[RMDB]
RNA sequence: GGGAACGACUCGAGUAGAGUCGAAAAGAAAGAAAGAAAUGUGUGUUGGAGGAUGAAAGUACGGAGUGAUCCAUCGGCUAAGUGUCUUGUCACAAUGCUGACACUCAAACUGCUGACAGCACACGAACGCAACUGAAAAAUUCGUUUUUCAGUUGCGAAAAGAAACAACAACAACAAC
Reactivity to DMS in 0.01 (KOAc 150mM, MgCl2 10mM, bicine 150mM(pH8.5), 24C), signal-to-noise 5, nucleotides 027 to 126: g040a090a100a120g000a150a120a080g020a090a100a060u020g010u010g000u000g040u000u000g000g000a300g000g000a060u020g070a060a040a010g010u010a080c270g020g000a040g000u000g010a110u010c150c240a160u010c040g000g050c000u010a120a220g020u000g000u010c300u010u030g010u050c010a000c040a020a130u000g020c000u000g000a040c010a000c010u000c010a030a060a010c000u000g010c010u000g000a280c000a000g000c030a000c000a000c030g020a080a130
Reactivity to 2A3 in 0.01 (KOAc 150mM, MgCl2 10mM, bicine 150mM(pH8.5), 24C), signal-to-noise 9, nucleotides 027 to 126: g080a020a040a010g120a030a070a010g120a040a120a090u210g000u000g000u000g000u010u010g010g010a040g020g010a060u100g170a180a140a040g030u070a030c210g050g000a000g000u010g020a070u120c070c040a040u040c020g000g000c000u030a100a090g000u000g010u040c130u210u220g120u250c030a000c000a010a030u140g000c000u000g010a000c000a000c000u000c000a060a100a050c020u030g000c010u020g010a020c000a000g000c000a000c000a000c000g000a030a000

Chemical mapping of a 177-nucleotide RNA with DMS and 2A3.
The reactions ran in a buffer of 150 mM KOAc, 10 mM MgCl2 and 150 mM bicine (pH 8.5), at 24 C.
High 2A3 reactivity points to a flexible backbone, as in loops and unpaired stretches.
DMS adducts were read by reverse transcription with MarathonRT.